Conditions: 150 mM KOAc, 10 mM MgCl2 and 150 mM bicine (pH 8.5), 24 C. Structure probing data (2A3 and DMS) for a 177-nucleotide construct. 2A3 adducts were read by reverse transcription with SuperScript II with manganese. For 2A3, 2,580 sequencing reads were counted. For DMS, 1,393 sequencing reads were counted.
RNA sequence: GGGAACGACUCGAGUAGAGUCGAAAACUGGGCGCCGUCGCGGCCCAUGCCGGUCAGCAGCACGCCCACGGCAUCGCCACGCCAAUAAUUCGCCACGCUCUCGAAAAACACGUCGAUGGACGGCCGACGUACCAGCCAUAUUCGUAUGGCUGGUACGAAAAGAAACAACAACAACAAC
Reactivity to 2A3 in 0.01 (KOAc 150mM, MgCl2 10mM, bicine 150mM(pH8.5), 24C), signal-to-noise 2, nucleotides 027 to 126: c010u010g010g010g000c030g020c070c050g060u080c040g000c020g000g020c000c000c050a060u210g080c100c030g090g000u120c030a060g010c010a010g010c030a010c070g020c000c010c020a020c000g000g000c010a020u060c060g010c040c020a040c060g030c000c000a060a000u200a050a100u120u090c040g020c000c020a030c040g000c020u020c000u020c020g030a070a090a010a030a060c100a020c050g050u030c020g040a100u120g100g020a010c020g050g040c010c010g030a050
Reactivity to DMS in 0.01 (KOAc 150mM, MgCl2 10mM, bicine 150mM(pH8.5), 24C), signal-to-noise 2, nucleotides 027 to 126: c100u010g030g000g010c030g000c030c070g030u000c080g000c070g060g000c020c040c070a020u040g040c070c040g000g020u010c080a080g020c040a090g020c090a110c150g010c040c010c010a100c150g000g020c060a050u010c050g000c010c010a040c060g000c040c040a020a120u020a110a090u000u010c050g020c040c000a070c050g010c040u000c000u000c040g010a030a030a060a110a060c120a070c120g000u000c040g000a160u000g000g000a040c020g010g010c070c020g010a160